[RMDB]
RNA sequence: GGGAACGACUCGAGUAGAGUCGAAAAAAAGGAUAUAUGUUAGUUAACGUUUAAUAUUAGCCAUUCGAUAUUAUUGAUUGAUAGUCGUCAAUCUGACAACGACCAUUAAGGACAAUUAAGGCCAGUAAGCCUAAUUAAAUUUCGAUUUAAUUAGGCUAAAAGAAACAACAACAACAAC
Reactivity to 2A3 in 0.01 (KOAc 150mM, MgCl2 10mM, bicine 150mM(pH8.5), 24C), signal-to-noise 2, nucleotides 027 to 126: a000a000a000g100g040a030u040a050u030a030u170g030u080u060a190g010u020u070a100a000c080g010u010u000u130a180a070u080a040u130u100a020g030c000c060a050u100u090c070g030a030u030a100u230u080a080u070u070g020a050u010u000g020a030u020a090g140u050c030g010u010c010a010a020u040c030u060g040a050c030a030a000c040g040a040c010c020a010u060u060a050a020g050g000a010c030a010a010u050u030a090a000g020g000c010c000a000g020u020a010
Reactivity to DMS in 0.01 (KOAc 150mM, MgCl2 10mM, bicine 150mM(pH8.5), 24C), signal-to-noise 4, nucleotides 027 to 126: a100a020a050g010g020a080u030a070u030a030u030g000u010u010a120g010u010u000a080a110c110g000u010u010u010a070a050u010a030u000u010a110g000c030c040a080u010u030c090g000a070u030a050u000u010a030u020u020g010a050u000u010g000a010u010a030g030u020c030g010u010c040a070a060u040c090u040g040a050c120a060a030c030g000a080c060c040a040u000u000a020a030g000g020a070c050a020a030u010u010a080a110g000g010c040c040a030g000u010a050